[RMDB]
RNA sequence: GGGAACGACUCGAGUAGAGUCGAAAAGUGCCGCUGCCGGAGCCGAUCUCCAACACCACCGGCGCGUCACGGCCAAACCAGGCACGGGUAUCCACCGGUGUCCCGCGCGGGGAUUGAGGUAGCGCCACUAUACGCACGGAUUCGUCCGUGCGUAUAGAAAAGAAACAACAACAACAAC
Reactivity to 2A3 in 0.01 (KOAc 150mM, MgCl2 10mM, bicine 150mM(pH8.5), 24C), signal-to-noise 2, nucleotides 027 to 126: g030u010g030c010c020g000c060u040g000c010c010g100g080a070g080c040c020g030a040u010c020u010c020c000a050a040c010a050c030c010a030c000c010g010g000c010g010c070g010u010c010a030c020g010g000c010c000a160a050a030c090c070a050g000g030c070a030c030g070g000g000u130a060u120c040c020a020c000c030g010g000u020g020u050c070c090c060g070c040g000c030g010g000g010g000a000u010u040g030a080g000g000u000a000g000c010g040c010c010a020
Reactivity to DMS in 0.01 (KOAc 150mM, MgCl2 10mM, bicine 150mM(pH8.5), 24C), signal-to-noise 4, nucleotides 027 to 126: g030u000g030c280c000g020c010u000g030c010c000g020g030a200g020c190c070g000a030u000c020u000c040c030a170a160c100a120c200c040a020c030c010g000g000c040g000c150g010u000c000a020c000g020g040c030c020a050a090a160c260c210a100g010g020c000a040c010g010g010g020u020a110u010c140c040a060c020c010g010g000u010g010u010c060c090c120g000c080g020c190g010g000g000g010a040u000u000g020a120g000g010u000a020g020c000g010c120c040a120

This 177-nucleotide RNA was probed chemically with 2A3 and DMS.
The DMS profile rests on 3,239 reads.
For DMS the reverse transcriptase was MarathonRT.
It was measured as part of the RMDB library OK2TST.
The RNA was probed in 150 mM KOAc, 10 mM MgCl2 and 150 mM bicine (pH 8.5) at 24 C.
2A3 adducts were read by reverse transcription with SuperScript II with manganese.